[RMDB]
RNA sequence: GGGAACGACUCGAGUAGAGUCGAAAAAACGUGAAUAGUUUUUAUCCUUCACGCAAAUUAGGGCAAAACUUUACGGUUGACCAGAGUGUAAUUGCCAAAACCUGUCGGUUAAUUAAGAGUCUCAACCCUUAGCGUAGAAGUUCGCUUCUACGCUAAGAAAAGAAACAACAACAACAAC
Reactivity to 2A3 in 0.01 (KOAc 150mM, MgCl2 10mM, bicine 150mM(pH8.5), 24C), signal-to-noise 3, nucleotides 027 to 126: a000a000c020g020u050g050a080a060u080a170g080u100u050u040u130u230a130u090c000c000u000u020c010a010c040g030c050a070a040a130u130u070a180g000g050g020c020a050a020a020a000c020u070u050u120a050c070g050g000u040u050g020a060c020c030a070g020a020g080u120g030u080a080a100u110u110g060c020c000a050a070a010a040c020c020u100g110u140c130g040g020u050u040a030a000u080u060a130a020g010a010g040u000c000u000c050a030a060c000c000
Reactivity to DMS in 0.01 (KOAc 150mM, MgCl2 10mM, bicine 150mM(pH8.5), 24C), signal-to-noise 4, nucleotides 027 to 126: a090a050c020g020u000g010a030a020u020a100g010u020u010u010u020u020a110u020c060c040u000u000c070a020c040g020c130a050a070a100u010u020a070g010g000g010c070a060a120a140a030c030u000u000u000a100c140g010g010u000u000g010a050c050c020a080g000a040g010u000g000u000a060a090u000u010g020c090c090a100a050a080a090c030c020u000g010u000c090g010g000u000u000a050a040u000u000a100a100g000a060g000u000c030u000c130a050a140c080c050